[RMDB]
RNA sequence: GGGAACGACUCGAGUAGAGUCGAAAACGCGCGAUCUCCGAUAACCCAAGCGGGCAGGGGGAUGGUUGGCGAUAGCGAUGCUGAUCAUAACGUUCUGCAAUGCUGUGCAUGUGCUGAAACAGGUUGACUAUUGUACGUGGUUCGCCACGUACAAUAGAAAAGAAACAACAACAACAAC
Reactivity to 2A3 in 0.01 (KOAc 150mM, MgCl2 10mM, bicine 150mM(pH8.5), 24C), signal-to-noise 3, nucleotides 027 to 126: c040g040c000g000c030g090a110u060c040u000c050c020g040a020u070a030a030c000c000c050a060a020g060c080g010g060g000c010a020g050g010g020g000g030a010u010g010g050u040u040g030g000c060g030a080u080a050g100c110g030a020u150g000c030u030g030a050u030c010a020u070a100a080c050g070u000u030c010u000g000c020a020a110u060g000c020u100g080u060g080c010a020u140g060u040g080c030u060g030a040a040a010c020a020g120g040u130u110g070a020
Reactivity to DMS in 0.01 (KOAc 150mM, MgCl2 10mM, bicine 150mM(pH8.5), 24C), signal-to-noise 5, nucleotides 027 to 126: c090g010c040g030c040g010a070u000c020u010c020c030g010a130u010a100a140c020c030c030a140a120g000c090g030g000g020c050a080g000g000g000g000g010a030u000g010g000u000u010g010g020c030g010a080u000a100g010c110g010a100u010g010c030u000g020a050u000c030a050u010a100a150c120g010u000u000c020u000g020c010a070a080u000g010c010u000g000u010g020c050a050u000g000u000g000c020u000g010a040a050a060c090a060g020g000u000u000g000a220